[RMDB]
RNA sequence: GGGAACGACUCGAGUAGAGUCGAAAACCUCAUAACUUCGGUUAUGAGGACGAGACCUUUGUGAGCGUCACAUAGGGAGCCUACACCCCAUUGGGGGUAGGCGAGGAUCUAUGAAGUCGCUCACUCUGGUGUGAUACGAAGACUUCGGUCUUCGUAAAGUUUAAAAUUUGUUCGCAAAUUUUAAACUAAAAGAAACAACAACAACAAC
Reactivity to DMS in 0.01 (KOAc 150mM, MgCl2 10mM, bicine 150mM(pH8.5), 24C), signal-to-noise 2, nucleotides 027 to 156: c010c020u000c000a000u000a020a000c000u000u030c300g030g010u020u000a000u010g000a010g000g000a010c090g000a160g010a040c000c000u000u000u020g000u000g000a040g000c020g020u000c010a300c010a020u000a010g020g000g010a110g020c000c000u000a020c000a090c010c010c000c200a300u010u020g000g030g030g000g060u000a010g000g000c020g000a040g000g020a070u020c000u000a010u010g000a080a180g030u000c000g000c000u000c010a000c000u000c030u000g010g010u010g000u000g000a270u000a020c000g020a060a020g020a020c000u000u010c300g050g010u000c000u010u000c000g020u000a000a050
Reactivity to 2A3 in 0.01 (KOAc 150mM, MgCl2 10mM, bicine 150mM(pH8.5), 24C), signal-to-noise 3, nucleotides 027 to 156: c000c000u000c000a000u000a010a000c000u040u070c260g090g000u010u000a000u000g000a000g050g000a020c080g100a080g050a040c010c000u010u020u020g000u000g010a010g000c000g000u000c000a010c000a070u000a000g000g010g000a010g040c010c000u030a030c160a300c000c000c010c100a300u300u300g000g000g000g000g000u000a000g010g010c010g000a090g000g000a000u000c000u000a000u010g080a160a030g020u000c010g000c000u000c000a000c000u000c000u010g010g020u040g030u120g080a070u030a100c000g000a000a000g000a000c010u010u100c300g090g000u000c000u000u000c000g000u010a020a030

Source: RMDB library RNAMAK, as collected in RNAgym.
Structure probing data (DMS and 2A3) for a 207-nucleotide construct.
2A3 adducts were read by reverse transcription with SuperScript II with manganese.
DMS (dimethyl sulfate) methylates the pairing face of unpaired adenines and cytosines.
For 2A3, 2,293 sequencing reads were counted.